[RMDB]
RNA sequence: GGGAACGACUCGAGUAGAGUCGAAAAGACAUCGGGACUGAGACACUGCCCGGACUCCUACGGGAGGCUGCAGCAACGAAUCUUCCGCAAUGGGCGCAAGCCUGACGGAGCAAUGCCGCGUGCGGGACUUUUACUGUUGGUUCGCCAACAGUAAAAGAAAAGAAACAACAACAACAAC
Reactivity to 2A3 in 0.01 (KOAc 150mM, MgCl2 10mM, bicine 150mM(pH8.5), 24C), signal-to-noise 2, nucleotides 027 to 126: g020a020c020a040u020c030g010g030g060a060c030u070g030a040g050a080c030a030c070u060g060c010c040c000g000g030a010c020u030c010c010u050a060c100g020g030g000a020g020g040c020u070g050c010a060g020c010a070a010c070g050a080a050u030c000u100u000c020c000g000c040a040a130u160g000g030g000c010g000c040a070a030g000c000c010u040g020a020c020g000g010a030g020c020a040a110u110g020c000c010g050c040g020u030g000c060g020g000g020a020
Reactivity to DMS in 0.01 (KOAc 150mM, MgCl2 10mM, bicine 150mM(pH8.5), 24C), signal-to-noise 3, nucleotides 027 to 126: g000a090c070a060u010c040g030g000g020a110c070u020g000a120g040a120c110a100c070u010g000c020c050c010g000g020a100c020u000c020c030u010a090c160g020g000g000a030g010g000c040u000g010c070a030g010c080a040a060c130g010a130a160u010c050u000u000c000c010g000c050a100a090u010g000g000g010c000g000c270a070a190g030c020c000u000g010a110c010g000g000a070g010c080a060a060u000g000c020c010g000c070g000u010g000c000g000g000g010a150